[RMDB]
Source: RMDB libraries RFM100 and RFMREP, as collected in RNAgym.
Structure probing data (2A3 and DMS) for a 177-nucleotide construct.

RNA sequence: GGGAACGACUCGAGUAGAGUCGAAAAAAGCCAGCCAAUGAAUCUGCUUACCUGAUUGUGUUUGUGCAGACAUACUUUAAAAACUGGCAAUAGUAAAGCCAUGUUACGAGCCUUAAGGACAUUGAAGGUAGCUAGUACAGUUCGCUGUACUAGCUACAAAAGAAACAACAACAACAAC
Reactivity to 2A3 in 0.01 (KOAc 150mM, MgCl2 10mM, bicine 150mM(pH8.5), 24C), signal-to-noise 5, nucleotides 027 to 126: a000a000g060c020c020a000g020c020c020a060a050u110g040a060a050u030c000u010g000c000u050u050a030c000c010u160g130a290u220u150g060u000g070u160u070u080g120u070g070c020a000g050a020c000a010u150a070c050u100u150u170a010a130a010a050a040c000u000g010g000c000a000a060u140a060g090u090a060a050a050g020c060c040a040u100g050u040u020a110c060g040a020g060c000c000u040u110a060a070g040g000a070c020a050u110u140g040a020a010g160
Reactivity to DMS in 0.01 (KOAc 150mM, MgCl2 10mM, bicine 150mM(pH8.5), 24C), signal-to-noise 2, nucleotides 027 to 126: a090a090g020c020c000a040g040c090c040a070a020u000g000a210a140u010c020u020g020c060u000u000a050c040c040u010g010a130u010u000g010u020g000u000u010u010g040u010g000c020a030g020a070c140a040u010a090c070u010u000u020a050a010a050a080a090c020u000g010g010c000a040a060u020a120g040u030a070a070a060g000c030c000a030u030g020u000u000a080c090g000a130g000c040c040u000u000a040a100g000g000a060c060a080u000u000g010a090a130g030
For 2A3 the reverse transcriptase was SuperScript II with manganese.
Conditions: 150 mM KOAc, 10 mM MgCl2 and 150 mM bicine (pH 8.5), 24 C.